[RMDB]
RNA sequence: GGGAACGACUCGAGUAGAGUCGAAAAAGACGGAAACCCAUCGACUGUCACCAGAUGCUGCAUCACCUGAUCACUGAUGGCGCAACGGUAUCCGGCGGUACAACUGAAUACUUGUAGCUGCCUUUUGAAAAGGAGUUCAUCUUCGGAUGAACUCCAAGACAAUGCAAUUCUUCGGAAUUGCAUUGUCAAAAGAAACAACAACAACAAC
Reactivity to 2A3 in 0.01 (KOAc 150mM, MgCl2 10mM, bicine 150mM(pH8.5), 24C), signal-to-noise 7, nucleotides 027 to 156: a000g040a010c040g030g020a070a060a050c030c010c010a040u080c030g100a100c050u080g010u080c030a010c040c020a030g030a140u100g030c060u080g020c010a030u030c000a020c020c030u080g050a070u070c030a020c070u030g010a020u040g110g040c030g000c040a050a070c030g010g010u020a060u050c060c050g010g000c000g000g010u030a020c010a030a010c030u160g070a150a080u130a160c040u020u060g020u040a040g090c010u010g010c010c000u100u100u050u130g100a090a080a020a010g000g010a010g000u000u000c000a000u000c000u040u070c170g080g000a000u000g000a000a000c000u000c000c000a000a000
Reactivity to DMS in 0.01 (KOAc 150mM, MgCl2 10mM, bicine 150mM(pH8.5), 24C), signal-to-noise 2, nucleotides 027 to 156: a070g000a090c020g000g000a060a090a130c150c020c000a150u000c000g020a110c020u010g010u000c030a050c010c000a050g010a040u000g000c040u010g010c070a170u000c030a020c020c000u030g040a200u010c080a120c100u010g020a120u000g000g030c030g000c040a080a100c000g030g010u010a070u000c010c010g000g060c000g030g010u000a050c090a070a120c060u000g000a060a100u010a070c050u020u000g010u000a080g000c000u000g020c000c140u000u000u000u000g000a050a110a090a150g010g010a050g030u010u000c010a030u000c000u000u000c300g030g000a020u000g000a000a020c020u000c000c000a010a010